Record summary
Structure probing data (DMS and 2A3) for a 177-nucleotide construct. The DMS profile rests on 4,261 reads. Conditions: 150 mM KOAc, 10 mM MgCl2 and 150 mM bicine (pH 8.5), 24 C. It was measured as part of the RMDB library VIROID. The 2A3 profile rests on 4,686 reads. Values are in units of 0.01, from 0 to 300, in steps of 10.

RNA sequence: GGGAACGACUCGAGUAGAGUCGAAAACCCGCCUCCACGCGGCCUCGCCCGGGCAACUAUUCUCCAGGAUCUCGGUCCAGGGGAAUAGGCGAAGGGGAACCCGACCUUUGCAAAGAAUUUGUGGGGACAUAUACUUGGAGUUCGCUCCAAGUAUAUGAAAAGAAACAACAACAACAAC
Reactivity to DMS in 0.01 (KOAc 150mM, MgCl2 10mM, bicine 150mM(pH8.5), 24C), signal-to-noise 4, nucleotides 027 to 126: c010c000c020g010c090c010u010c020c010a040c040g010c150g000g020c020c000u000c110g010c050c030c030g020g000g010c040a100a280c010u000a010u000u000c000u000c000c000a090g020g010a020u000c020u010c290g030g000u000c000c000a100g020g010g000g000a010a000u010a000g000g020c010g000a040a040g010g010g000g010a100a110c020c010c000g000a040c010c010u000u000u000g020c010a150a100a090g010a110a090u000u010u010g020u000g000g000g000g010a300
Reactivity to 2A3 in 0.01 (KOAc 150mM, MgCl2 10mM, bicine 150mM(pH8.5), 24C), signal-to-noise 3, nucleotides 027 to 126: c000c000c000g010c000c000u000c000c000a030c010g040c040g080g040c000c000u030c020g050c000c030c020g020g050g000c030a060a000c010u010a010u020u020c000u010c000c000a010g000g010a010u000c030u120c230g140g010u000c010c020a030g000g000g010g010a010a000u000a000g030g000c010g030a020a000g010g010g000g010a010a020c020c000c000g050a060c010c000u030u030u060g000c030a070a090a100g070a180a230u170u210u220g070u070g020g010g000g000a000